[RMDB]
The record gives the reactivity of an RNA of 207 nucleotides to 2A3. For 2A3, 418 sequencing reads were counted. It was measured as part of the RMDB library OK3TST.

RNA sequence: GGGAACGACUCGAGUAGAGUCGAAAACAGGGUCAUAACUUUGAAAGCAGGUAAUACUCUUGUGAACUCCCAAGCUUCGGAAGGUGUCUUACACGGAUACGGGUGUGAAACAAAUGUCCAACGCCCGUCUUCAUGCGGCGAUGACCCAACCGUUACAGAAGGGUUCUAACUUCGGUUAGAACCCUUCAAAAGAAACAACAACAACAAC
Reactivity to 2A3 in 0.01 (KOAc 150mM, MgCl2 10mM, bicine 150mM(pH8.5), 24C), signal-to-noise 1, nucleotides 027 to 156: c010a020g000g000g000u020c020a050u080a180a000c030u260u070u130g070a110a070a000g160c070a020g120g050u090a130a060u100a110c030u040c020u120u070g030u030g110a070a070c060u010c020c000c030a050a000g040c000u040u030c000g140g150a070a070g000g100u110g070u150c010u050u110a060c070a040c110g070g000a020u000a020c000g000g010g000u030g000u050g030a010a010a010c070a020a290a070u300g030u070c020c020a000a000c020g000c060c000c000g010u010c010u060u050c000a010u080g000c030g010g050c090g060a050u080g000a000c000c000c000a010a040c020c000g060u050u090a000c000a030
The reactions ran in a buffer of 150 mM KOAc, 10 mM MgCl2 and 150 mM bicine (pH 8.5), at 24 C. 2A3 adducts were read by reverse transcription with SuperScript II with manganese.